[RMDB]
RNA sequence: GGGAACGACUCGAGUAGAGUCGAAAACGCACUCGCAGCUUAAUAACCUGCGCUGAACCCUUCUCCCCCAGCUUGCCUGUGUCCUAGGGAAUUGGAAGGUCAUCCUUCACAGGAUCGUGUGGAAGUCAUUACUCGUGAGUGUUCGCACUCACGAGAACAUGCCAUUGUGGUUCGCCACAAUGGCAUGAAAAGAAACAACAACAACAAC
Reactivity to DMS in 0.01 (KOAc 150mM, MgCl2 10mM, bicine 150mM(pH8.5), 24C), signal-to-noise 1, nucleotides 027 to 156: c030g030c060a060c020u000c010g000c050a000g050c020u040u000a140a130u020a120a080c250c000u020g000c030g000c080u040g010a090a070c030c010c030u010u000c010u000c050c000c000c010c010a090g000c040u000u000g000c020c030u000g000u000g010u000c040c020u010a120g020g020g010a060a110u000u000g000g020a080a040g000g020u000c020a140u000c000c000u000u000c050a060c080a090g010g000a020u010c060g000u000g000u000g000g000a120a260g030u010c040a090u000u000a120c010u000c020g000u020g110a050g030u000g020u000u020c260g080c000a010c000u000c010a010c000g010a010g010a010a080
Reactivity to 2A3 in 0.01 (KOAc 150mM, MgCl2 10mM, bicine 150mM(pH8.5), 24C), signal-to-noise 2, nucleotides 027 to 156: c050g040c040a050c020u030c000g000c000a020g000c010u040u020a090a000u040a070a030c000c000u000g000c020g070c090u070g090a080a090c050c000c000u090u030c090u070c020c000c000c000c000a000g040c030u030u120g030c000c000u010g000u010g050u090c000c080u040a040g020g020g030a050a130u140u110g060g010a040a010g060g050u090c020a100u070c020c000u090u040c030a030c020a040g040g020a050u050c070g020u070g030u060g030g050a010a060g050u070c030a080u040u140a130c010u000c000g000u010g000a000g020u000g000u090u030c090g000c020a000c000u000c020a040c010g000a000g010a000a000
The record gives the reactivity of an RNA of 207 nucleotides to DMS and 2A3. DMS adducts were read by reverse transcription with MarathonRT. Conditions: 150 mM KOAc, 10 mM MgCl2 and 150 mM bicine (pH 8.5), 24 C. High DMS reactivity at an A or C suggests that its Watson-Crick edge is free.